[RMDB]
RNA sequence: GGGAACGACUCGAGUAGAGUCGAAAAUCUCCCCAAGGACGAAGCCAUGCAUGCCCGCUCACCCGGGACGCGGCGGACGGCUCAGGACGACGGUUGCACCCCCCGCGGCGGUCCCUGCUAGCCGGACGCUUGUUAAAGAUUUCGAUCUUUAACAAGCAAAAGAAACAACAACAACAAC
Reactivity to 2A3 in 0.01 (KOAc 150mM, MgCl2 10mM, bicine 150mM(pH8.5), 24C), signal-to-noise 9, nucleotides 027 to 126: u030c030u040c010c000c000c010a080a100g090g000a020c050g080a080a010g020c010c010a030u130g010c020a030u180g040c020c010c010g020c010u050c030a070c000c020c000g020g010g010a030c020g010c020g030g010c010g010g020a020c020g010g000c010u020c040a020g030g020a020c090g010a010c040g110g020u050u040g020c030a230c000c010c000c000c000c010g000c000g020g000c020g030g010u010c010c010c000u020g010c040u060a010g010c000c000g010g010a020c060
Reactivity to DMS in 0.01 (KOAc 150mM, MgCl2 10mM, bicine 150mM(pH8.5), 24C), signal-to-noise 8, nucleotides 027 to 126: u020c100u010c010c020c000c150a120a110g000g000a070c060g010a130a100g010c020c010a070u010g020c080a090u010g010c010c020c020g010c050u020c190a090c120c170c020g000g000g010a080c100g010c040g000g010c010g010g000a110c030g000g000c010u000c020a020g000g010a090c110g020a050c050g020g030u010u000g000c030a150c040c010c010c020c000c040g010c010g010g000c010g010g010u000c020c010c010u000g000c140u020a040g010c010c000g000g010a110c120
The record gives the reactivity of an RNA of 177 nucleotides to 2A3 and DMS. Conditions: 150 mM KOAc, 10 mM MgCl2 and 150 mM bicine (pH 8.5), 24 C. The data come from the RNA Mapping Database (RMDB), libraries RFM100 and RFMREP. Values cover nucleotides 27 to 126.